[RMDB]
The record gives the reactivity of an RNA of 207 nucleotides to 2A3.
RNA sequence: GGGAACGACUCGAGUAGAGUCGAAAAAGCGCGCAUACUACGGUAUGCGCGCAAUCAGAAAUCGGGAAUGAUGUUCUCCCCUGGGAUUCCAAAACGGCUGUUUCGCUGAUGACGUCUGCUUUUUUAAUCACCACCGUUUGGUUCGCCAAACGGUGAAGCAAAAAUAUAAGUUCGCUUAUAUUUUUGCAAAAGAAACAACAACAACAAC
Reactivity to 2A3 in 0.01 (KOAc 150mM, MgCl2 10mM, bicine 150mM(pH8.5), 24C), signal-to-noise 1, nucleotides 027 to 156: a000g000c000g000c050g040c000a010u020a010c020u020a020c140g050g000u020a000u010g040c030g010c020g010c000a010a000u010c020a000g120a030a090a050u020c010g010g010g050a020a110u070g060a130u150g060u040u000c020u000c000c000c010c010u050g000g070g070a060u100u140c050c000a040a060a040a020c010g000g010c020u030g010u130u110u090c040g020c020u060g010a040u050g020a020c040g040u010c020u040g070c070u020u120u020u030u040u200a100a150u060c040a030c060c000a000c000c000g010u010u010u020g000g000u010u010c070g010c020c000a000a010a000c000g010g000u010g010a000a010
The RNA was probed in 150 mM KOAc, 10 mM MgCl2 and 150 mM bicine (pH 8.5) at 24 C. For 2A3 the reverse transcriptase was SuperScript II with manganese. For 2A3, 648 sequencing reads were counted. The data come from the RNA Mapping Database (RMDB), library M2RFPK.